The record gives the reactivity of an RNA of 177 nucleotides to DMS. Reactivities are given for positions 27 through 126. The RNA was probed in 150 mM KOAc, 10 mM MgCl2 and 150 mM bicine (pH 8.5) at 24 C.
RNA sequence: GGGAACGACUCGAGUAGAGUCGAAAAGGAGUAAGACCAUAGCGAUGGGGGGAGAUGCUAGGAGUUAGAGGAGACCGAAGCGAGGAGGAAAGUAAAGAGAGCAACGGGGCUAGCCGUCAGGUGUUCCACCAAUCCAAGGAUUCGUCCUUGGAUUGGUAAAAGAAACAACAACAACAAC
Reactivity to DMS in 0.01 (KOAc 150mM, MgCl2 10mM, bicine 150mM(pH8.5), 24C), signal-to-noise 1, nucleotides 027 to 126: g030g010a040g040u000a180a080g020a170c040c060a090u010a120g020c070g000a050u020g000g010g000g020g000g030a110g000a060u000g030c050u030a020g000g010a040g000u010u010a140g020a120g010g000a090g000a080c030c090g000a040a080g030c050g000a060g000g000a040g010g020a030a060a080g010u000a020a080a100g000a100g000a040g000c040a020a110c110g020g000g020g010c090u040a070g010c040c010g000u010c110a060g000g000u010g020u000u020c060c010